[RMDB]
RNA sequence: GGGAACGACUCGAGUAGAGUCGAAAACUCAACUCGUUCGCGAGUUGAGAAACCCGAUGAAGCGGCACUUAGAGAGCUUCAUACACCUAAGAAAAGUGCUAAAAAGAAAACGGUUCGCCGUUUUCAACUACCGUUAUACGUUCGCGUAUAACGGUAGAAAAGAAACAACAACAACAAC
Reactivity to 2A3 in 0.01 (KOAc 150mM, MgCl2 10mM, bicine 150mM(pH8.5), 24C), signal-to-noise 2, nucleotides 027 to 126: c000u000c000a000a020c000u000c010g020u060u020c090g000c000g120a000g000u000u010g000a000g000a020a020a000c010c010c000g020a040u040g020a000a030g020c030g030g020c030a010c010u080u160a040g030a000g010a010g210c000u010u010c000a010u020a020c060a020c020c060u110a130a050g080a090a100a020a000g030u030g010c050u080a120a090a010a020a110g000a010a010a000a000c000g030g010u020u060c220g020c060c000g000u020u020u000u000c010a010a010
Reactivity to DMS in 0.01 (KOAc 150mM, MgCl2 10mM, bicine 150mM(pH8.5), 24C), signal-to-noise 2, nucleotides 027 to 126: c000u000c000a010a010c000u000c000g030u020u020c200g040c020g020a010g030u000u000g000a000g000a050a090a100c020c000c020g000a050u010g000a010a000g010c030g020g000c010a030c010u000u010a160g000a200g000a180g010c020u010u000c040a020u000a060c100a120c120c130u000a100a060g020a100a080a100a060g020u000g000c030u020a040a050a090a110a120g000a010a000a010a010c000g000g010u000u000c240g010c000c000g010u000u000u000u000c000a090a160

About this RNA
Chemical mapping of a 177-nucleotide RNA with 2A3 and DMS. The reactions ran in a buffer of 150 mM KOAc, 10 mM MgCl2 and 150 mM bicine (pH 8.5), at 24 C. It was measured as part of the RMDB library M2PK50. The DMS profile rests on 1,700 reads.